The record gives the reactivity of an RNA of 177 nucleotides to DMS and 2A3.
For DMS the reverse transcriptase was MarathonRT.
It was measured as part of the RMDB library M2PK50.
2A3 is a SHAPE reagent: it acylates the 2'-hydroxyl of flexible nucleotides of all four kinds.
[RMDB]
RNA sequence: GGGAACGACUCGAGUAGAGUCGAAAAGAGUCCUAUUUCGAUAGGACUCAACUAAAAUCAGGGGUAAAUAAUUAGCUGGCGUUACCGCUGAACGCCAGCAUACUAGCCUCGUCUUCGGACGAGGCAAUCAUAUCAAGCACUUCGGUGCUUGAUAUGAAAAAGAAACAACAACAACAAC
Reactivity to DMS in 0.01 (KOAc 150mM, MgCl2 10mM, bicine 150mM(pH8.5), 24C), signal-to-noise 2, nucleotides 027 to 126: g000a020g000u000c000c000u000a010u000u000u020c220g030a020u000a000g010g010a020c020u020c000a000a090c100u000a050a040a060a050u000c090a050g000g000g010g010u000a060a090a070u020a050a120u020u000a090g010c000u000g000g020c020g000u000u000a020c020c200g030c050u000g000a040a020c000g010c000c000a000g010c010a010u000a020c270u000a150g000c000c010u000c000g000u000c000u000u020c160g040g010a020c000g030a000g020g020c020a000a010
Reactivity to 2A3 in 0.01 (KOAc 150mM, MgCl2 10mM, bicine 150mM(pH8.5), 24C), signal-to-noise 2, nucleotides 027 to 126: g010a000g010u000c010c000u010a030u000u080u080c150g100a010u010a010g000g070a000c000u000c010a010a010c000u040a030a000a050a110u150c060a050g000g030g070g060u030a010a080a120u120a080a210u230u150a070g000c000u000g010g000c010g000u020u030a090c030c070g060c180u110g030a000a000c000g000c030c010a010g000c000a010u020a000c010u010a030g000c000c010u020c000g000u000c010u030u040c240g070g000a010c000g000a000g010g000c000a000a000
Overview: Reactivities are given for positions 27 through 126. For 2A3 the reverse transcriptase was SuperScript II with manganese. Conditions: 150 mM KOAc, 10 mM MgCl2 and 150 mM bicine (pH 8.5), 24 C.